[RMDB]
RNA sequence: GGGAACGACUCGAGUAGAGUCGAAAAGAAACAGGCCGAAAGAAAUAUGGCGAAACGGCCUGACAAGGCUCGUAAAGAAUCGCCAUCGUAAAGUAAAGAAAGCAUGAGCCAAAAGAAAAGAAAGAAAAGCUAUUACUGGUUUCGACCAGUAAUAGCUAAAAGAAACAACAACAACAAC
Reactivity to DMS in 0.01 (KOAc 150mM, MgCl2 10mM, bicine 150mM(pH8.5), 24C), signal-to-noise 3, nucleotides 027 to 126: g000a160a070a090c040a060g010g010c000c000g050a170a100a200g000a030a050a140u040a020u020g010g000c020g000a010a060a190c020g010g020c020c000u010g000a060c280a070a130g010g000c030u000c070g050u010a070a080a160g010a110a040u020c000g000c010c000a000u010c080g010u020a010a030a030g010u020a190a020a070g000a070a020a090g010c030a060u030g000a070g000c000c050a150a050a070a070g000a110a060a040a100g030a080a080a160g010a090a110a070
Reactivity to 2A3 in 0.01 (KOAc 150mM, MgCl2 10mM, bicine 150mM(pH8.5), 24C), signal-to-noise 2, nucleotides 027 to 126: g100a000a050a000c040a020g000g000c000c010g030a110a190a040g090a000a150a050u080a080u020g010g000c010g000a000a050a000c000g000g000c000c040u010g000a000c060a000a030g000g000c000u040c120g040u030a140a000a000g010a020a100u000c000g000c010c020a000u000c010g000u130a070a120a170g040u050a080a110a000g080a090a070a020g180c200a060u130g000a010g000c000c000a020a020a010a010g060a000a160a000a000g150a050a070a010g060a070a070a000